[RMDB]
RNA sequence: GGGAACGACUCGAGUAGAGUCGAAAAGAAACCACCCGUUCACACGGGUGGUUUUGAUUUAAGUUGUAGUCUUAAUCUAGUUAGACAGCACUUUAUCGGUAAUAACUAUAUUAAACAGUAGUUAUAAAGUAAACGAAGAAUUCGUUCUUCGUUUACUAAAAGAAACAACAACAACAAC
Reactivity to DMS in 0.01 (KOAc 150mM, MgCl2 10mM, bicine 150mM(pH8.5), 24C), signal-to-noise 5, nucleotides 027 to 126: g000a010a000a000c000c000a000c000c000c000g030u000u020c300a170c300a090c000g010g010g010u000g010g000u000u000u000u000g000a100u010u020u030a050a080g000u010u000g040u010a070g010u020c030u000u010a060a040u000c120u020a090g020u000u000a010g010a040c060a300g020c050a040c030u010u010u020a040u030c090g000g010u010a080a040u000a000a000c000u000a010u010a040u010u000a050a050a090c070a080g010u000a030g010u000u000a030u010a060a110
Reactivity to 2A3 in 0.01 (KOAc 150mM, MgCl2 10mM, bicine 150mM(pH8.5), 24C), signal-to-noise 2, nucleotides 027 to 126: g000a020a010a000c010c000a000c000c000c000g030u170u240c060a050c020a000c110g020g000g000u000g000g000u000u000u010u000g000a000u000u000u050a110a000g010u000u000g070u120a030g020u010c000u010u060a060a070u100c170u140a050g070u010u050a030g020a080c060a050g130c060a000c020u070u100u120a170u230c070g020g050u060a040a090u020a000a090c000u000a020u070a120u240u120a100a110a020c030a040g020u010a040g000u000u030a060u030a060a110